Background
An RNA of 207 nucleotides, treated with 2A3 and DMS and read out base by base. DMS adducts were read by reverse transcription with MarathonRT. The reactions ran in a buffer of 150 mM KOAc, 10 mM MgCl2 and 150 mM bicine (pH 8.5), at 24 C.
RNA sequence: GGGAACGACUCGAGUAGAGUCGAAAAUCCUAAGUCUUAUUCACACUGCUAAGACAGGAUAUUGUCAGCUGUAUCGGAAACGAUACAGCUUGGAUUUAUAUCUCGAGCAGUGUAAAUAAGAUAUGGAAAAACCACCGACUCUUCGGAGUCGGUGGAACUUUAGUGUGUACUUCGGUACACACUAAAGAAAAGAAACAACAACAACAAC
Reactivity to 2A3 in 0.01 (KOAc 150mM, MgCl2 10mM, bicine 150mM(pH8.5), 24C), signal-to-noise 2, nucleotides 027 to 156: u030c010c010u040a170a020g020u050c000u020u000a000u010u010c020a000c000a020c000u000g000c000u080a200a090g120a200c090a080g050g000a010u000a010u000u030g010u010c000a000g010c000u000g000u010a000u000c000g030g000a070a030a050c010g000a000u000a000c010a000g000c000u000u000g000g000a000u010u210u010a010u010a010u000c060u050c120g030a000g000c000a000g000u000g000u000a000a010a010u000a000a000g010a000u030a080u030g010g060a030a160a050a010a020c000c010a000c010c000g000a000c000u040c010u020u100c300g120g000a000g000u000c000g000g000u000g000g000a000a000
Reactivity to DMS in 0.01 (KOAc 150mM, MgCl2 10mM, bicine 150mM(pH8.5), 24C), signal-to-noise 1, nucleotides 027 to 156: u010c010c000u020a040a270g010u010c010u000u030a010u000u000c020a040c000a020c000u010g030c020u030a210a100g040a260c250a100g030g000a010u010a010u000u000g010u000c000a040g000c000u000g030u010a040u000c000g000g000a260a080a240c010g040a010u000a010c010a010g040c010u000u000g010g000a030u000u000u000a000u000a000u030c010u010c040g000a030g000c010a030g010u020g020u000a000a000a010u020a000a000g000a010u000a260u020g010g000a100a090a140a180a140c000c000a030c010c020g000a030c010u000c010u000u020c300g040g030a070g060u000c000g000g040u010g020g010a000a010
Source: RMDB library RNAMAK, as collected in RNAgym.